[RMDB]
RNA sequence: GGGAACGACUCGAGUAGAGUCGAAAACAAGGACGUUUCGACGUCCUUGAUAGGACCGCCCUUUUGGGCUAAGGCGAUACGGACAGCCGGGUCCACUGCCGAACGCAAACCCCUUCGGGGGUUUGAAACCGAUACAGAUAUUCGUAUCUGUAUCGGUAAAAGAAACAACAACAACAAC
Reactivity to DMS in 0.01 (KOAc 150mM, MgCl2 10mM, bicine 150mM(pH8.5), 24C), signal-to-noise 6, nucleotides 027 to 126: c010a010a000g000g010a000c000g010u000u000u020c160g010a030c000g020u000c000c000u000u010g000a060u010a080g000g000a030c010c010g010c010c000c010u000u010u010u010g020g000g010c010u010a030a040g010g020c010g010a090u010a080c020g000g000a050c040a300g000c010c010g000g010g000u000c010c000a050c070u020g000c010c000g000a300a080c280g010c000a010a010a000c000c000c000c000u000u010c240g020g010g000g000g000u000u000u000g010a040a100
Reactivity to 2A3 in 0.01 (KOAc 150mM, MgCl2 10mM, bicine 150mM(pH8.5), 24C), signal-to-noise 4, nucleotides 027 to 126: c000a000a000g010g010a000c000g010u040u070u200c210g090a010c010g000u010c000c000u000u010g000a010u020a000g020g020a000c010c010g050c010c000c010u200u180u150u300g020g020g020c100u120a150a060g000g000c010g020a040u080a150c020g040g030a020c020a030g020c020c010g010g020g000u010c010c000a010c030u030g010c000c010g060a070a000c060g020c060a000a010a000c020c000c010c000u010u040c130g060g000g000g000g000u000u000u010g000a000a000
Overview: This 177-nucleotide RNA was probed chemically with DMS and 2A3. The reactions ran in a buffer of 150 mM KOAc, 10 mM MgCl2 and 150 mM bicine (pH 8.5), at 24 C. The DMS profile rests on 8,406 reads. For DMS the reverse transcriptase was MarathonRT.